The record gives the reactivity of an RNA of 177 nucleotides to 2A3 and DMS. Conditions: 150 mM KOAc, 10 mM MgCl2 and 150 mM bicine (pH 8.5), 24 C. For DMS, 1,761 sequencing reads were counted.

[RMDB]
RNA sequence: GGGAACGACUCGAGUAGAGUCGAAAACCCUGGAUGCGGCGGCUGCUCAUACGCCCGAGCAAGUGCAACAACAACAGCAGCAGGAGCAACACGUUUAUGUUCAGGCUGCCCCAGGAGUGGACUAUGCCGACAGGGAUAGGUUCGCCUAUCCCUGUCGAAAAGAAACAACAACAACAAC
Reactivity to 2A3 in 0.01 (KOAc 150mM, MgCl2 10mM, bicine 150mM(pH8.5), 24C), signal-to-noise 2, nucleotides 027 to 126: c010c000c030u030g100g040a110u100g040c060g050g010c010g020g000c070u020g010c010u010c030a080u100a200c030g040c000c070c040g010a010g000c030a050a010g060u010g090c030a100a040c010a030a060c010a020a020c020a080g010c030a000g030c000a000g040g020a050g030c020a060a020c080a030c090g040u110u170u060a150u050g010u020u020c030a010g010g010c000u010g010c000c020c030c050a030g000g120a050g020u130g010g000a040c020u070a040u290g040c050
Reactivity to DMS in 0.01 (KOAc 150mM, MgCl2 10mM, bicine 150mM(pH8.5), 24C), signal-to-noise 2, nucleotides 027 to 126: c020c000c000u000g020g010a130u000g020c220g010g030c040g010g010c020u000g020c030u000c050a110u000a100c180g020c020c080c100g000a090g000c030a040a050g000u000g010c040a070a080c080a080a050c110a040a100c240a100g010c000a020g000c000a050g040g000a040g010c020a070a080c100a070c300g010u000u020u010a060u030g000u000u000c010a050g000g010c000u000g000c020c060c040c020a170g090g000a120g010u000g000g000a100c050u000a070u000g010c110